[RMDB]
RNA sequence: GGGAACGACUCGAGUAGAGUCGAAAAAUCUUUAAGCAGAUGGCAGGUUCACCCCGUACGGUGCGGAAGUUCGCGCUUCCGUGAAACGCGAAAAUCGGACGGUGGCUGCAAGUCGAAUCGCAAAACCUAUAGCUUGUUAGGUUCGCCUAACAAGCAACUGUAUUGUAUCGUUCGCGAUACAAUACAGAAAAGAAACAACAACAACAAC
Reactivity to 2A3 in 0.01 (KOAc 150mM, MgCl2 10mM, bicine 150mM(pH8.5), 24C), signal-to-noise 7, nucleotides 027 to 156: a000u050c040u030u140u070a110a020g010c050a040g010a080u050g060g000c020a010g040g030u140u170c020a040c000c000c000c000g010u020a030c020g010g030u060g030c000g000g010a010a010g010u140u260c080g030c050g000c110u000u010c010c000g010u020g050a110a120a010c120g000c030g110a080a030a020a080u070c010g010g020a020c060g030g020u050g030g000c010u020g000c030a040a020g040u040c030g040a050a050u080c050g000c000a040a040a080a110c020c020u110a080u090a190g000c010u000u000g000u000u000a010g020g000u030u030c100g030c040c000u000a000a000c000a000a000g000c000a000a000
Reactivity to DMS in 0.01 (KOAc 150mM, MgCl2 10mM, bicine 150mM(pH8.5), 24C), signal-to-noise 2, nucleotides 027 to 156: a070u000c040u010u000u010a120a120g030c090a100g030a040u010g010g000c060a050g000g020u000u010c030a100c040c000c010c000g000u010a020c020g000g030u010g010c070g000g000a030a070g020u000u000c250g020c300g000c000u000u000c010c070g050u010g000a040a050a030c080g020c060g000a110a040a120a090u000c010g030g000a040c050g000g020u010g020g020c040u020g020c020a060a070g010u010c050g020a050a060u000c060g000c020a060a090a040a090c020c030u000a160u000a080g010c010u000u000g000u000u000a040g000g010u000u010c300g060c030c000u000a010a010c000a010a000g000c000a010a020